[RMDB]
RNA sequence: GGGAACGACUCGAGUAGAGUCGAAAAGAUAUGGAUACUAUGAAGCACACGCCUCAACAGCUCGGAAACGAGACAUGAGGCGGUGUGGAGUAUCCUAAGUCAAAACAGGAACGUUCGCGUUCCUGAAUCAUUGCAUGAUCUUCGGAUCAUGCAAUGAAAAAGAAACAACAACAACAAC
Reactivity to 2A3 in 0.01 (KOAc 150mM, MgCl2 10mM, bicine 150mM(pH8.5), 24C), signal-to-noise 3, nucleotides 027 to 126: g020a040u070a050u200g000g000a000u000a000c030u080a130u300g010a020a000g020c010a000c000a020c030g000c030c000u060c010a050a150c040a210g000c010u000c000g010g020a030a100a050c020g010a000g020a020c040a120u140g000a000g030g020c000g010g000u010g000u020g000g020a010g000u000a010u000c000c000u020a170a050g050u050c020a030a020a100a160c010a020g030g000a010a010c000g000u100u110c300g010c000g090u000u000c020c010u020g000a000a040
Reactivity to DMS in 0.01 (KOAc 150mM, MgCl2 10mM, bicine 150mM(pH8.5), 24C), signal-to-noise 3, nucleotides 027 to 126: g020a050u000a300u000g000g000a000u000a000c000u010a250u030g000a130a190g000c000a000c020a120c000g020c000c000u010c000a000a070c230a170g000c000u000c000g010g000a080a070a180c000g000a010g000a000c100a190u010g000a040g010g000c000g010g000u010g000u000g000g000a020g010u000a010u000c000c000u000a000a050g000u000c040a080a090a120a160c000a000g000g000a010a000c030g010u000u000c210g020c010g020u000u000c000c010u010g000a050a050
This 177-nucleotide RNA was probed chemically with 2A3 and DMS. The reactions ran in a buffer of 150 mM KOAc, 10 mM MgCl2 and 150 mM bicine (pH 8.5), at 24 C. The DMS profile rests on 2,340 reads. Source: RMDB library TTRDEL, as collected in RNAgym. DMS adducts were read by reverse transcription with MarathonRT.